[RMDB]
RNA sequence: GGGAACGACUCGAGUAGAGUCGAAAACACAUUAUCAUUCCAAACUCUCUCAAAAAAACAAAAAUAAUUACUUCAAACUAAAACCCAAUGUUCAACACAAGAGUUCAUAUUGUCAUUAUCACUCUAAACCUUUUAUUCUUGUACGCUGGAGGGAGAAUAAUCGGAUUAGGUUCGCCUAAUCCGAUUAAAAAGAAACAACAACAACAAC
Reactivity to 2A3 in 0.01 (KOAc 150mM, MgCl2 10mM, bicine 150mM(pH8.5), 24C), signal-to-noise 1, nucleotides 027 to 156: c150a000c000a010u050u300a040u300c030a040u180u020c110c000a030a160a190c020u080c020u030c000u000c010a080a120a040a000a000a120a160c140a000a180a180a120a040u140a070a150u120u130a040c000u130u100c130a110a110a150c020u120a060a000a090a210c000c090c000a010a000u060g000u000u040c010a050a050c010a020c020a160a000g000a000g000u040u040c000a050u130a060u130u140g000u150c000a000u000u230a090u100c060a040c080u080c060u040a020a160a170c020c030u170u120u000u000a080u180u030c000u030u030g000u020a000c130g000c060u090g100g000a000g020g000g000a000g080a110a040